[RMDB]
RNA sequence: GGGAACGACUCGAGUAGAGUCGAAAAGAUAUGGACCAAGAGCGAUAAGCUGAGGUCGGAAACGACCUUCAGCUUUUGACGCUCGACGUCCUAAGUCAAAAGAAUGGCUCGUUCGCGAGCCAUUCAACGUGUUACUCUAGUUCGCUAGAGUAACACGAAAAGAAACAACAACAACAAC
Reactivity to DMS in 0.01 (KOAc 150mM, MgCl2 10mM, bicine 150mM(pH8.5), 24C), signal-to-noise 5, nucleotides 027 to 126: g000a020u010a220u010g010g000a020c000c020a070a290g000a010g020c000g020a140u000a030a030g010c000u000g010a030g010g000u000c000g000g000a040a050a100c000g010a000c000c000u000u010c000a000g000c000u000u000u010u010g010a200c030g000c000u000c010g000a200c290g010u000c000c000u000a020a080g000u010c010a120a070a120a130g010a010a000u000g010g000c000u010c000g020u000u010c200g010c010g010a010g000c000c000a000u000u000c000a040a080
Reactivity to 2A3 in 0.01 (KOAc 150mM, MgCl2 10mM, bicine 150mM(pH8.5), 24C), signal-to-noise 2, nucleotides 027 to 126: g000a010u040a020u080g000g000a000c000c020a060a030g000a000g000c020g100a170u060a300a040g000c000u010g010a000g010g000u000c020g010g000a030a040a000c000g000a000c010c000u190u200c030a000g000c060u040u000u040u070g050a010c000g000c000u000c010g000a010c010g000u000c000c000u010a040a000g030u010c030a010a010a020a230g000a000a000u000g000g000c010u000c010g040u060u070c300g000c020g130a000g000c000c000a010u000u000c000a000a000
The record gives the reactivity of an RNA of 177 nucleotides to DMS and 2A3. Source: RMDB library TTRDEL, as collected in RNAgym. For 2A3 the reverse transcriptase was SuperScript II with manganese. For DMS the reverse transcriptase was MarathonRT. The reactions ran in a buffer of 150 mM KOAc, 10 mM MgCl2 and 150 mM bicine (pH 8.5), at 24 C.